An RNA of 207 nucleotides, treated with 2A3 and read out base by base. Source: RMDB library OK3TST, as collected in RNAgym. The RNA was probed in 150 mM KOAc, 10 mM MgCl2 and 150 mM bicine (pH 8.5) at 24 C.
RNA sequence: GGGAACGACUCGAGUAGAGUCGAAAAAAAGGAAAGGAAUGUUAGCUAUAACGGUGUAGAUGAAUUAAUAGACAGAACCAAGAACUGGAAGACGUAUCGUCAGACGUUUCAGGAACAACAGCAUCUCCUAAGCGGCCAGGGGCGCGGCAAUCCGUUCCGGAUGUACACCGUUCGCGGUGUACAUCCGAAAAGAAACAACAACAACAAC
Reactivity to 2A3 in 0.01 (KOAc 150mM, MgCl2 10mM, bicine 150mM(pH8.5), 24C), signal-to-noise 1, nucleotides 027 to 156: a000a000a000g090g030a080a070a000g050g010a100a000u040g020u130u140a060g000c050u040a020u000a230a020c080g010g030u050g020u050a080g030a050u060g020a050a090u050u030a150a060u030a040g000a020c060a000g060a020a000c040c020a100a060g080a080a140c110u090g030g000a040a040g050a020c010g000u090a090u290c060g060u050c080a000g020a140c000g050u060u030u130c030a020g000g000a080a120c020a090a030c000a080g100c050a080u000c020u020c020c010u030a060a020g020c030g000g000c000c000a000g000g000g000g060c020g030c020g020g000c000a000a020u090c010c020g020u060u030c000